[RMDB]
RNA sequence: GGGAACGACUCGAGUAGAGUCGAAAAUGGGCCUAGAGACCUGGCCCACAUUGUUUUGCCUGUUCUGCUAUCACCCUCAAUGACAAUACUAUUAGGUCUCCAUGGCCGCGCAGCGGAAGACACGACGCAUCGCCUAAUGCUUCGGCAUUAGGCGAUGAAAAGAAACAACAACAACAAC
Reactivity to 2A3 in 0.01 (KOAc 150mM, MgCl2 10mM, bicine 150mM(pH8.5), 24C), signal-to-noise 2, nucleotides 027 to 126: u050g020g000g010c000c000u070a040g000a000g010a030c010c020u020g030g000c020c030c010a000c010a000u020u030g020u120u090u050u040g070c010c000u070g040u110u100c030u040g000c000u030a050u150c040a090c000c030c000u020c040a090a090u140g000a020c030a040a110u180a120c090u130a100u240u100a030g000g020u000c000u020c000c030a110u180g000g020c000c000g000c030g040c050a030g050c010g070g000a030a000g060a000c060a000c040g080a000c020g000
Reactivity to DMS in 0.01 (KOAc 150mM, MgCl2 10mM, bicine 150mM(pH8.5), 24C), signal-to-noise 1, nucleotides 027 to 126: u000g000g000g000c000c000u030a070g010a020g000a000c010c020u000g000g120c000c020c050a060c190a010u050u000g000u000u000u000u080g010c100c050u000g030u000u050c020u040g000c040u020a120u000c040a110c020c060c020u010c050a070a080u000g000a090c020a080a140u050a140c200u000a120u010u010a000g050g030u000c000u000c020c090a090u000g000g010c000c000g000c000g000c130a070g040c080g000g020a090a020g000a080c080a020c010g000a110c190g000
This 177-nucleotide RNA was probed chemically with 2A3 and DMS.
For 2A3 the reverse transcriptase was SuperScript II with manganese.
Source: RMDB library OK1LIB, as collected in RNAgym.
The reactions ran in a buffer of 150 mM KOAc, 10 mM MgCl2 and 150 mM bicine (pH 8.5), at 24 C.
Values cover nucleotides 27 to 126.
DMS adducts were read by reverse transcription with MarathonRT.
For 2A3, 1,196 sequencing reads were counted.